This 177-nucleotide RNA was probed chemically with 2A3 and DMS. Values cover nucleotides 27 to 126. For 2A3 the reverse transcriptase was SuperScript II with manganese. It was measured as part of the RMDB library OK2TRN. Conditions: 150 mM KOAc, 10 mM MgCl2 and 150 mM bicine (pH 8.5), 24 C.

[RMDB]
RNA sequence: GGGAACGACUCGAGUAGAGUCGAAAAGCUGCAGCACGGCUUCUCCAUCGGCAUCGGCGACACCGUGGCCGACGCCAAGACCAUGAACAUCAUCAGCGAGACCAUCGCUGAGGCAAAAGAGAAGGUGCGUUAUAUGUCUCUUCGGAGACAUAUAACGAAAAGAAACAACAACAACAAC
Reactivity to 2A3 in 0.01 (KOAc 150mM, MgCl2 10mM, bicine 150mM(pH8.5), 24C), signal-to-noise 4, nucleotides 027 to 126: g000c010u050g010c060a060g020c030a040c050g030g000c000u050u000c010u030c030c020a070u120c060g000g000c000a010u010c010g010g050c000g060a040c060a060c160c080g040u060g130g010c000c010g000a020c020g000c010c000a030a000g050a030c030c030a090u130g080a050a080c040a100u150c010a030u010c000a010g000c000g030a020g090a200c100c050a120u030c000g000c000u000g000a020g010g000c030a050a080a080a050g070a000g030a080a020g040g020u030g030
Reactivity to DMS in 0.01 (KOAc 150mM, MgCl2 10mM, bicine 150mM(pH8.5), 24C), signal-to-noise 6, nucleotides 027 to 126: g000c060u000g010c050a080g030c050a210c040g020g000c020u000u010c020u000c020c060a090u010c130g010g010c010a060u000c010g010g000c010g010a100c050a090c150c120g030u010g010g030c000c000g030a020c050g010c010c020a030a080g020a130c070c040a090u000g010a100a090c150a120u010c070a220u000c010a020g000c000g000a040g020a270c230c170a120u000c010g010c000u000g010a020g000g010c180a070a030a070a080g010a060g000a050a060g010g020u000g020